[RMDB]
RNA sequence: GGGAACGACUCGAGUAGAGUCGAAAAGAUGUGUGCCGGUACGAGUGUGUCAUUUCUGUUGAUGCCAGUGGCUUUGACCAUGCUUAAGUACCAUUCCACUGGGGAAUUCGCGCCUGUCAGCUCGUUCUGAGGCAUACCCUUUCGAGGGUAUGCCUCAAAAAGAAACAACAACAACAAC
Reactivity to 2A3 in 0.01 (KOAc 150mM, MgCl2 10mM, bicine 150mM(pH8.5), 24C), signal-to-noise 2, nucleotides 027 to 126: g120a020u050g060u030g000u060g060c010c100g000g010u020a020c020g030a000g060u080g000u060g110u080c060a090u000u080u000c090u080g150u070u140g130a080u190g060c000c000a050g050u050g090g000c000u120u050u020g050a030c090c010a030u050g000c030u120u010a170a020g010u040a110c060c000a010u100u070c040c000a050c040u060g010g020g020g140a000a000u030u040c050g000c030g000c020c030u040g060u050c020a030g010c030u020c000g010u130u000c070
Reactivity to DMS in 0.01 (KOAc 150mM, MgCl2 10mM, bicine 150mM(pH8.5), 24C), signal-to-noise 1, nucleotides 027 to 126: g000a110u000g040u070g010u030g000c000c020g060g010u000a020c030g000a080g020u000g000u050g000u000c030a100u010u000u000c090u040g010u000u000g000a160u050g040c060c020a030g030u010g060g000c150u000u000u000g000a100c000c030a070u000g000c000u020u000a010a050g040u000a080c070c050a100u010u010c060c000a050c080u030g050g000g010g020a110a070u000u000c000g020c040g000c020c040u000g080u000c040a100g020c030u000c180g000u000u030c030